[RMDB]
RNA sequence: GGGAACGACUCGAGUAGAGUCGAAAACAUGACUUUUUUAGUCCAGUCAAUGGGGUUCAGUCUGGCACGUAUACAUUAGCUACUUCCAUUGCGUGCAAAUUACUUAGCGCCUCGCGGGGAUCCGCGGGCAUACUGAUGCGUUCGCGCAUCAGUAUGCAAAAGAAACAACAACAACAAC
Reactivity to DMS in 0.01 (KOAc 150mM, MgCl2 10mM, bicine 150mM(pH8.5), 24C), signal-to-noise 4, nucleotides 027 to 126: c080a110u020g000a050c020u000u010u000u030u040u030a030g010u010c050c140a100g020u010c050a070a110u010g010g010g000g020u000u020c100a040g000u010c100u010g010g010c020a020c050g020u000a030u020a060c150a100u060u020a090g020c090u010a060c110u010u000c030c020a120u000u020g010c030g020u010g010c030a050a060a100u030u020a050c120u000u010a080g030c030g000c020c010u020c030g010c000g000g010g020g020a140u020c010c000g000c020g020g000
Reactivity to 2A3 in 0.01 (KOAc 150mM, MgCl2 10mM, bicine 150mM(pH8.5), 24C), signal-to-noise 9, nucleotides 027 to 126: c060a090u130g030a050c030u020u080u030u040u120u300a020g030u030c030c020a010g030u050c040a070a130u100g000g000g020g000u040u050c020a010g040u020c040u080g050g000c020a010c030g030u050a060u070a120c100a090u150u140a040g050c050u080a050c040u120u020c040c020a070u030u100g010c010g000u010g000c010a000a060a110u130u050a050c050u030u080a020g020c030g090c030c000u040c020g000c000g000g010g010g100a100u120c000c000g000c000g000g010